[RMDB]
RNA sequence: GGGAACGACUCGAGUAGAGUCGAAAAGAACAUCCUGCAUAGUGCUGCCAGGAAAUCCCUAUUUCAUAUAAGAGGGGGCUGGCUGGUUGCAUAUGUAGGAUGUCCCAUCUCCCAGCCCACUUCGUCACAUAGACGCUUCUUUCGAGAAGCGUCUAUGAAAAGAAACAACAACAACAAC
Reactivity to 2A3 in 0.01 (KOAc 150mM, MgCl2 10mM, bicine 150mM(pH8.5), 24C), signal-to-noise 2, nucleotides 027 to 126: g030a030a020c000a010u000c000c000u000g000c010a000u020a020g230u030g030c030u030g000c010c000a000g060g050a030a050a040u020c010c000c000u000a080u040u130u060c080a070u160a040u060a240a030g060a100g010g000g000g000g030c010u060g160g120c000u010g000g000u030u020g000c000a000u010a010u010g020u010a000g000g000a000u000g000u000c010c000c010a030u040c020u010c010c000c000a020g000c000c020c000a080c040u130u090c040g040u020c010a020
Reactivity to DMS in 0.01 (KOAc 150mM, MgCl2 10mM, bicine 150mM(pH8.5), 24C), signal-to-noise 1, nucleotides 027 to 126: g000a010a030c010a020u000c000c040u020g040c010a000u000a040g070u000g030c000u020g060c070c000a040g010g000a180a080a160u000c000c010c000u000a160u010u000u050c160a130u000a070u070a050a200g010a050g000g050g000g000g000c130u000g000g000c000u010g000g030u000u010g040c000a040u000a000u000g010u000a000g000g000a000u000g010u020c060c030c040a170u050c110u000c000c010c020a090g020c040c030c060a070c090u000u000c070g000u020c180a140